[RMDB]
RNA sequence: GGGAACGACUCGAGUAGAGUCGAAAACGAGGCCUCUUGCGAAAGACACGCGGUGCAAGAAACGUUAGAAAGACACGAAGCCCAGUGUAACAACGUGACACUAACUUAGGAAAGUCGCAGGGCUCGAAAAUAUAUAAUAAUUCGUUAUUAUAUAUUUAAAAGAAACAACAACAACAAC
Reactivity to 2A3 in 0.01 (KOAc 150mM, MgCl2 10mM, bicine 150mM(pH8.5), 24C), signal-to-noise 3, nucleotides 027 to 126: c010g020a040g090g150c020c010u130c070u120u060g020c000g020a100a020a020g070a040c020a010c100g070c080g020g010u060g050c040a060a000g010a160a090a000c000g000u000u020a030g070a090a160a010g080a020c010a010c040g050a030a020g050c000c020c000a020g020u020g000u040a110a070c050a020a030c030g020u030g040a000c010a000c060u120a200a020c010u080u050a020g080g010a190a060a000g060u000c000g000c010a010g000g000g000c000u010c000g030a000
Reactivity to DMS in 0.01 (KOAc 150mM, MgCl2 10mM, bicine 150mM(pH8.5), 24C), signal-to-noise 4, nucleotides 027 to 126: c050g000a030g000g000c020c010u030c080u040u020g020c020g000a070a060a080g010a240c080a090c070g020c140g010g000u010g010c190a070a090g020a080a070a040c050g000u000u010a070g010a090a090a110g010a070c010a040c020g000a130a150g010c040c030c050a140g000u020g000u000a060a140c100a040a060c020g000u000g000a210c030a060c040u010a080a100c090u010u030a070g000g000a090a160a070g000u000c000g010c030a050g000g000g010c000u000c030g000a070